[RMDB]
RNA sequence: GGGAACGACUCGAGUAGAGUCGAAAAGCAAAAUGUAAAGAUAAGGGACAAAAGAGUCAUCUAUAGCGAUGAUGUCAUUAGAUUCUCCUCCCUUUACCUUGCCAAAUAGGCGGAUGACUGCCUUUACAGUAAUAGUCGUAUUCGUACGACUAUUACUAAAAGAAACAACAACAACAAC
Reactivity to 2A3 in 0.01 (KOAc 150mM, MgCl2 10mM, bicine 150mM(pH8.5), 24C), signal-to-noise 9, nucleotides 027 to 126: g040c030a020a030a040a130u220g010u100a060a030a000g020a030u100a080a100g020g000g000a020c060a040a120a030a030g030a020g020u020c020a010u000c020u050a200u200a190g140c100g060a040u060g020a010u080g220u120c030a060u030u120a040g080a170u100u010c030u020c010c000u040c020c000c000u000u000u000a020c000c010u020u050g030c000c020a050a130a190u140a060g010g000c030g040g040a080u210g090a150c030u040g000c000c000u060u090u060a160c120
Reactivity to DMS in 0.01 (KOAc 150mM, MgCl2 10mM, bicine 150mM(pH8.5), 24C), signal-to-noise 7, nucleotides 027 to 126: g010c090a040a030a070a080u040g010u010a030a020a000g020a060u020a140a130g020g000g000a050c140a050a070a100a090g000a170g020u000c010a000u000c000u010a140u040a110g010c190g000a010u000g010a020u000g010u030c030a100u020u000a080g000a170u030u010c040u000c010c040u000c300c070c010u000u000u000a040c000c130u000u000g000c040c130a060a070a040u050a030g000g000c010g000g020a120u020g010a120c050u010g010c010c000u000u010u010a050c210
An RNA of 177 nucleotides, treated with 2A3 and DMS and read out base by base. For DMS the reverse transcriptase was MarathonRT. The 2A3 profile rests on 28,587 reads. Conditions: 150 mM KOAc, 10 mM MgCl2 and 150 mM bicine (pH 8.5), 24 C. 2A3 adducts were read by reverse transcription with SuperScript II with manganese.